[RMDB]
RNA sequence: GGGAACGACUCGAGUAGAGUCGAAAAGGCAGGAAUAGAAUGGGCCGAAUCUAGUGUGACACUGCAGGCCAAAAGCUAUUUUUGUUUGGCACAAGGCCUGGUGGCUGAAACGGCGGUGUUCAACAAGCAAUAUUAAAUAUUUCGAUAUUUAAUAUUGAAAAGAAACAACAACAACAAC
Reactivity to DMS in 0.01 (KOAc 150mM, MgCl2 10mM, bicine 150mM(pH8.5), 24C), signal-to-noise 9, nucleotides 027 to 126: g010g000c020a050g000g010a100a070u020a060g020a090a100u020g010g000g000c010c020g000a070a130u020c040u020a060g010u030g010u020g000a080c010a010c020u000g000c020a050g000g000c000c000a020a040a100a130g010c060u010a010u020u020u040u030u040g010u010u010u000g000g020c020a110c140a140a200g000g000c010c000u010g010g020u010g000g020c020u000g000a030a060a260c150g000g000c020g010g020u000g010u010u000c040a080a070c190a100a120g010
Reactivity to 2A3 in 0.01 (KOAc 150mM, MgCl2 10mM, bicine 150mM(pH8.5), 24C), signal-to-noise 2, nucleotides 027 to 126: g040g010c050a010g020g080a050a040u070a080g040a030a050u070g030g000g020c000c000g020a010a010u000c000u030a030g040u020g010u020g080a010c000a000c000u010g010c040a030g020g000c000c000a010a060a000a030g000c010u010a100u040u060u020u080u100g150u050u080u030g010g000c000a020c010a050a010g020g000c010c000u010g030g020u060g000g010c020u030g000a020a010a030c000g050g000c000g000g030u070g020u060u060c030a070a030c020a030a040g070